The record gives the reactivity of an RNA of 177 nucleotides to 2A3 and DMS.

RNA sequence: GGGAACGACUCGAGUAGAGUCGAAAAGCGGUGAAGCAGAGGUCUGAGGCUGAGAAGUCUCAGCAGAGGUCAUCGUCGAAUUAAUACUGGUUUAAGAAUACCUCUGAACUUAGACUAGUAGAUGAUAGUUAGAGUAUGUAUUCGUACAUGCUCUAACAAAAGAAACAACAACAACAAC
Reactivity to 2A3 in 0.01 (KOAc 150mM, MgCl2 10mM, bicine 150mM(pH8.5), 24C), signal-to-noise 9, nucleotides 027 to 126: g010c010g010g010u010g010a030a000g070c010a000g000a000g010g000u000c000u010g000a000g000g000c000u000g010a010g030a070a010g000u000c000u000c000a000g000c010a010g020a030g020g070u010c000a000u000c000g050u020c020g070a050a060u060u060a080a050u030a040c000u000g010g000u000u000u000a000a000g000a010a000u010a010c000c000u000c000u000g010a030a010c000u000u000a000g000a000c000u000a000g000u000a020g020a060u110g010a030u040a090
Reactivity to DMS in 0.01 (KOAc 150mM, MgCl2 10mM, bicine 150mM(pH8.5), 24C), signal-to-noise 6, nucleotides 027 to 126: g000c010g010g010u000g000a020a070g020c010a000g010a010g010g010u010c000u000g000a010g000g010c000u000g000a220g000a190a010g010u000c000u000c000a000g010c200a120g010a150g000g000u000c000a000u000c010g020u010c050g010a090a060u020u020a060a060u000a010c000u000g000g000u000u000u000a000a010g000a060a180u010a020c000c000u000c000u000g000a070a300c000u000u000a000g000a000c000u000a000g010u000a020g010a070u020g000a090u020a140
The reactions ran in a buffer of 150 mM KOAc, 10 mM MgCl2 and 150 mM bicine (pH 8.5), at 24 C.
The DMS profile rests on 59,570 reads.